[RMDB]
RNA sequence: GGGAACGACUCGAGUAGAGUCGAAAACAACAGUGGGGACGUGUCCCCGACGUGGAGCCAAGAGGAAUGAGCCUCGCCAACAGCAGCCGUUUACGGCUGGAAAGGGGAAAAACAAAGCGCAGGGCAAAUACAUGAAUGCCUUCGGGCAUUCAUGUAUAAAAGAAACAACAACAACAAC
Reactivity to DMS in 0.01 (KOAc 150mM, MgCl2 10mM, bicine 150mM(pH8.5), 24C), signal-to-noise 3, nucleotides 027 to 126: c070a120a120c140a080g050u100g000g010g000g010a000c050g030u030g000u040c000c030c000c000g000a030c060g020u000g020g000a160g000c080c100a070a080g000a080g010g000a140a060u000g020a090g000c020c010u020c070g000c000c030a090a070c190a070g000c040a000g000c140c040g020u000u050u020a010c010g000g030c010u000g010g000a010a090a060g000g000g000g000a050a050a050a100a070c150a040a060a080g000c030g000c020a060g000g010g010c050a080a100
Reactivity to 2A3 in 0.01 (KOAc 150mM, MgCl2 10mM, bicine 150mM(pH8.5), 24C), signal-to-noise 2, nucleotides 027 to 126: c040a000a010c000a050g040u100g030g020g000g010a000c080g100u120g180u170c080c040c030c000g000a030c030g050u040g040g000a000g090c050c030a060a000g020a050g080g000a110a060u190g030a060g060c000c010u040c020g020c000c000a080a100c020a000g040c000a000g030c000c000g030u110u150u160a110c010g040g020c010u060g000g010a000a010a030g040g000g000g020a050a000a000a070a040c050a010a100a000g050c030g000c020a030g000g050g010c000a110a000
An RNA of 177 nucleotides, treated with DMS and 2A3 and read out base by base.
Values cover nucleotides 27 to 126.
The 2A3 profile rests on 1,256 reads.